RNA sequence: GGGAACGACUCGAGUAGAGUCGAAAACCAGCUCAUCCUGCUUGGACUCAAAUAAGCGGAUGAGCAGGAAGAGGAUCUGCUGCUGCAAGGUGGGAUGAACGGCGGCCACUUCAUCCAGUACCGCCAACAAAAUUACUCACUUCGGUGAGUAAUUUUGAAAAGAAACAACAACAACAAC
Reactivity to DMS in 0.01 (KOAc 150mM, MgCl2 10mM, bicine 150mM(pH8.5), 24C), signal-to-noise 5, nucleotides 027 to 126: c010c000a180g010c010u010c000a010u000c000c010u050g040c000u000u000g010g010a190c250u050c300a120a100a110u020a010a020g020c020g010g000a010u000g010a000g030c020a010g020g000a110a060g000a040g020g000a090u030c030u000g000c040u010g000c030u010g010c060a100a080g000g000u000g000g000g000a070u010g010a060a060c130g010g000c020g000g000c070c070a030c030u000u000c070a090u010c050c080a070g000u020a150c020c010g000c050c010a090a190
Reactivity to 2A3 in 0.01 (KOAc 150mM, MgCl2 10mM, bicine 150mM(pH8.5), 24C), signal-to-noise 8, nucleotides 027 to 126: c000c000a000g010c010u000c000a000u000c010c020u130g040c010u040u030g100g110a230c070u050c210a040a140a110u190a100a020g010c000g000g000a000u010g000a010g000c000a000g020g020a040a060g060a030g090g020a060u020c020u080g000c000u010g010c020u030g010c040a060a110g070g020u030g000g050g010a060u090g040a060a020c070g050g000c010g010g000c020c010a030c020u090u070c030a080u050c030c010a010g010u030a030c010c010g000c020c000a010a020